Chemical mapping of a 177-nucleotide RNA with DMS and 2A3. Reactivities are given for positions 27 through 126. For 2A3 the reverse transcriptase was SuperScript II with manganese. DMS (dimethyl sulfate) methylates the pairing face of unpaired adenines and cytosines. Reactivities are rounded to 0.1 and cut off at 0 and 3. The DMS profile rests on 1,211 reads.

RNA sequence: GGGAACGACUCGAGUAGAGUCGAAAAGAGACAGGGUUCGCCCUGUCUCAAAGAACGCGAAGAAAACCGAAAUAAAACGGUAUGGUACGCGAGCAACAACAAAAACUAAGACCUUCGGGUCUUAGAACUUGAGGUAAGAGUUCGCUCUUACCUCAAGAAAAGAAACAACAACAACAAC
Reactivity to DMS in 0.01 (KOAc 150mM, MgCl2 10mM, bicine 150mM(pH8.5), 24C), signal-to-noise 2, nucleotides 027 to 126: g000a040g020a040c000a010g000g020g010u020u020c190g000c020c010c000u000g010u000c000u000c000a040a060a060g010a050a120c000g020c030g030a090a180g010a050a060a160a030c000c010g010a080a090a140u010a040a100a150a150c000g000g000u000a050u000g000g000u000a100c010g000c020g030a130g000c020a020a020c100a060a080c080a040a060a050a110a150c020u000a000a010g010a030c000c000u000u000c180g010g000g010u000c000u000u000a000g000a060a080
Reactivity to 2A3 in 0.01 (KOAc 150mM, MgCl2 10mM, bicine 150mM(pH8.5), 24C), signal-to-noise 2, nucleotides 027 to 126: g010a000g030a000c000a010g060g020g000u060u070c090g110c000c000c000u000g000u030c010u000c000a000a000a020g010a040a010c010g000c010g020a040a090g070a080a160a010a030c000c000g100a060a190a050u300a050a140a040a020c010g000g030u050a070u070g050g020u090a030c020g000c010g010a000g030c000a020a060c010a010a030c010a000a110a020a010a010c000u000a010a010g020a010c000c000u040u170c300g170g020g000u010c000u000u010a000g000a020a030